[RMDB]
RNA sequence: GGGAACGACUCGAGUAGAGUCGAAAAGAUAUGGAUUGAGGGAGAACGCUAUCGGAAACGAUAGAUGUUCGAAGAACUCAAUGUCCUAAGUCAAACGUAACUUUAUGGUUCGCCAUAAAGUUACGAAGUAAUUGGCCAAGUUCGCUUGGCCAAUUACAAAAGAAACAACAACAACAAC
Reactivity to DMS in 0.01 (KOAc 150mM, MgCl2 10mM, bicine 150mM(pH8.5), 24C), signal-to-noise 2, nucleotides 027 to 126: g020a020u000a080u000g010g000a050u000u000g000a020g000g000g040a070g030a000a000c000g010c000u000a010u010c010g010g000a060a040a120c010g000a030u010a000g010a010u020g030u000u000c020g000a070a170g000a100a300c000u000c010a000a010u000g030u020c000c030u000a040a110g000u000c040a120a120a270c020g010u000a000a010c000u000u020u000a000u000g010g010u020u010c260g000c000c000a000u000a020a030a000g010u000u000a000c020g010a020a050
Reactivity to 2A3 in 0.01 (KOAc 150mM, MgCl2 10mM, bicine 150mM(pH8.5), 24C), signal-to-noise 1, nucleotides 027 to 126: g040a000u050a030u130g020g000a030u030u060g000a010g050g000g010a020g010a000a010c010g000c040u000a010u010c000g000g000a100a000a010c060g000a000u010a000g070a110u060g000u000u000c020g000a090a000g000a000a020c000u020c000a010a110u180g090u090c000c000u040a090a060g040u000c050a090a080a060c030g000u010a000a000c000u000u000u000a020u010g000g090u070u090c270g030c130c000a000u000a000a000a000g010u010u000a000c000g010a040a010

Structure probing data (DMS and 2A3) for a 177-nucleotide construct. The data come from the RNA Mapping Database (RMDB), library TTRDEL. The reactions ran in a buffer of 150 mM KOAc, 10 mM MgCl2 and 150 mM bicine (pH 8.5), at 24 C.